[RMDB]
RNA sequence: GGGAACGACUCGAGUAGAGUCGAAAAAAAGAUAUGGAGCACAGGGAGCAGUACACUCCGUUGAUCAUUUAUCGGAAACGAUAAAUGGGAGGAGUGCGCUGCGAAGAACUGUGCUCCUAAGUCAAAAGUUAAACCACAAGUUCGCUUGUGGUUUAACAAAAGAAACAACAACAACAAC
Reactivity to DMS in 0.01 (KOAc 150mM, MgCl2 10mM, bicine 150mM(pH8.5), 24C), signal-to-noise 1, nucleotides 027 to 126: a080a090a090g000a040u000a300u020g020g000a030g000c000a020c000a010g010g020g000a150g010c020a010g020u000a060c020a000c000u010c000c000g020u000u010g020a040u000c000a000u000u010u000a020u000c000g000g000a120a090a220c000g020a010u000a000a000a000u010g000g000g000a000g000g020a020g020u000g010c010g020c000u010g000c010g020a060a110g020a120a190c010u000g000u000g000c000u000c000c000u000a000a060g000u010c040a110a120a120a120
Structure probing data (DMS) for a 177-nucleotide construct.
DMS (dimethyl sulfate) methylates the pairing face of unpaired adenines and cytosines.
The RNA was probed in 150 mM KOAc, 10 mM MgCl2 and 150 mM bicine (pH 8.5) at 24 C.
For DMS, 1,516 sequencing reads were counted.
Values cover nucleotides 27 to 126.